[RMDB]
RNA sequence: GGGAACGACUCGAGUAGAGUCGAAAAGAUAUGGAUUGAAAUGUGAACUACGAUACGGAUCGGAAACGAUCCGAAUAUCGCACAUCGUACGUCCUAAGUCAAAUCAAGUGCGUUCGCGCACUUGAAAGCAUCGAAACUUGUUCGCAAGUUUCGAUGCAAAAGAAACAACAACAACAAC
Reactivity to DMS in 0.01 (KOAc 150mM, MgCl2 10mM, bicine 150mM(pH8.5), 24C), signal-to-noise 1, nucleotides 027 to 126: g010a030u000a050u010g000g030a030u000u010g070a130a070a010u000g010u000g000a100a060c220u010a220c000g000a000u000a070c000g000g000a010u020c030g010g000a020a030a120c010g010a000u000c000c010g000a030a030u000a000u000c000g000c000a040c010a000u040c010g000u010a150c300g000u010c000c000u000a030a200g000u030c010a090a070a160u000c000a020a000g000u000g030c000g010u010u020c300g020c020g000c000a000c000u010u000g000a010a110a050
Reactivity to 2A3 in 0.01 (KOAc 150mM, MgCl2 10mM, bicine 150mM(pH8.5), 24C), signal-to-noise 1, nucleotides 027 to 126: g000a010u040a010u130g040g000a010u140u300g060a250a120a010u020g030u030g010a100a100c130u270a060c300g000a000u010a010c000g010g000a000u000c010g000g000a040a010a050c000g010a000u000c020c000g010a010a010u000a000u000c000g010c000a000c000a020u010c000g070u150a110c300g000u040c000c000u000a030a000g010u000c000a040a000a140u010c000a010a020g000u020g060c010g010u050u050c210g000c000g000c160a000c000u010u010g000a000a010a000
Overview: The data come from the RNA Mapping Database (RMDB), library TTRDEL. Chemical mapping of a 177-nucleotide RNA with DMS and 2A3. Conditions: 150 mM KOAc, 10 mM MgCl2 and 150 mM bicine (pH 8.5), 24 C. 2A3 adducts were read by reverse transcription with SuperScript II with manganese.